[RMDB]
RNA sequence: GGGAACGACUCGAGUAGAGUCGAAAACUCUUGGCUAGGAAGAUCAAUGAGGCUGUCGGUCAUGAAACCAUCAGUGUCCCCUCUAGAAAAGAAGAGAUAUUAGAUACACAUCAGGUUAGAGCAGCAAAGGCCUGCGGAGAGGGGACUAUGGUCACAACGUACUCCUAGCUUUCGAGCUAGGAGUACGAAAAGAAACAACAACAACAAC
Reactivity to 2A3 in 0.01 (KOAc 150mM, MgCl2 10mM, bicine 150mM(pH8.5), 24C), signal-to-noise 1, nucleotides 027 to 156: c000u000c000u000u170g020g000c020u090a080g030g000a020a010g020a050u040c030a050a150u220g000a050g060g000c050u050g100u070c090g000g000u060c020a050u050g040a070a060a000c000c000a000u010c030a030g160u050g040u210c000c000c040c010u000c040u080a080g080a120a110a000a000g070a030a010g020a000g030a040u020a090u300u220a060g040a020u040a080c010a000c010a070u090c020a000g010g010u020u050a040g010a030g010c030a010g000c000a210a060a000g090g030c000c000u000g030c040g040g000a100g000a000g040g000g000g000a000c000u010a010u000g000g000u040c010a030c020a060a020